[RMDB]
RNA sequence: GGGAACGACUCGAGUAGAGUCGAAAAUUGUAGAAUUAGAUGACCAAGGGCAUCAUUUAGACUCCUAUUUUGUCGUUAAGAGGCAUACUAUGGAGAAUUAUGAACUAGAGAAGCACUGUUACGACUUGAACCCGUAGCUUCGGCUACGGGAAAAGAAACAACAACAACAAC
Reactivity to DMS in 0.01 (KOAc 150mM, MgCl2 10mM, bicine 150mM(pH8.5), 24C), signal-to-noise 2, nucleotides 027 to 129: u080u030g040u010a030g000a100a060u000u000a120g000a000u030g040a170c030c040a010a140g000g000g000c000a080u040c040a050u010u010u030a070g000a300c010u030c000c000u010a120u000u000u000u100g080u000c010g040u020u080a170a090g020a140g060g040c010a060u050a030c110u010a080u000g050g000a060g010a040a120u030u070a140u000g060a020a060c210u020a050g000a160g020a050a050g000c020a060c170u030g020u000u000a090c150g000a120c020u040u000g060a140a130
Reactivity to 2A3 in 0.01 (KOAc 150mM, MgCl2 10mM, bicine 150mM(pH8.5), 24C), signal-to-noise 2, nucleotides 027 to 129: u160u120g030u020a110g020a150a010u140u100a010g000a010u060g030a050c040c080a060a010g110g020g000c000a000u000c000a000u050u030u130a070g000a000c000u000c000c000u000a060u000u020u010u010g000u000c030g060u100u050a130a070g060a040g160g000c000a000u070a000c110u110a030u120g000g000a010g000a000a060u160u120a170u100g030a000a000c050u000a140g010a000g010a110a000g030c000a000c010u020g040u090u040a000c050g000a000c000u000u000g000a150a080
This 170-nucleotide RNA was probed chemically with DMS and 2A3. For 2A3 the reverse transcriptase was SuperScript II with manganese. The reactions ran in a buffer of 150 mM KOAc, 10 mM MgCl2 and 150 mM bicine (pH 8.5), at 24 C. Reactivities are given for positions 27 through 129. Values are in units of 0.01, from 0 to 300, in steps of 10. It was measured as part of the RMDB library 15KLIB.